[RMDB]
RNA sequence: GGGAACGACUCGAGUAGAGUCGAAAAGCGUGACCUAUGUCUAGGGGUGAAAGGCCCAUCGAAUCCGGAAACAGCUGGUUCCGACCGAAACAUGUCGAAGCAUGACCUCUGCCGAGGUAGUCUGUGGACUAUAGAUACUUUUCGAAGUAUCUAUAGUAAAAGAAACAACAACAACAAC
Reactivity to DMS in 0.01 (KOAc 150mM, MgCl2 10mM, bicine 150mM(pH8.5), 24C), signal-to-noise 9, nucleotides 027 to 126: g010c040g020u010g000a130c030c060u010a060u020g010u010c040u010a120g000g010g010g010u000g010a080a100a130g010g000c010c010c020a100u010c080g010a080a070u010c160c060g000g000a100a100a060c090a100g010c060u010g010g010u000u000c030c010g000a070c060c030g000a080a090a100c080a050u010g000u000c040g000a100a110g010c050a050u010g000a090c040c010u000c020u010g010c130c070g000a050g000g010u010a050g000u000c030u010g010u010g000g010
Reactivity to 2A3 in 0.01 (KOAc 150mM, MgCl2 10mM, bicine 150mM(pH8.5), 24C), signal-to-noise 9, nucleotides 027 to 126: g040c040g050u070g030a090c010c020u080a070u140g070u010c060u080a110g020g020g000g010u050g090a110a060a030g130g010c000c000c000a010u040c020g030a040a040u030c030c020g020g030a040a090a050c030a030g070c040u090g060g000u060u000c020c020g020a030c010c010g060a050a070a030c050a040u110g020u050c050g050a060a010g040c030a040u100g030a040c010c020u030c030u060g040c030c060g030a020g020g010u030a030g040u010c050u050g080u080g060g030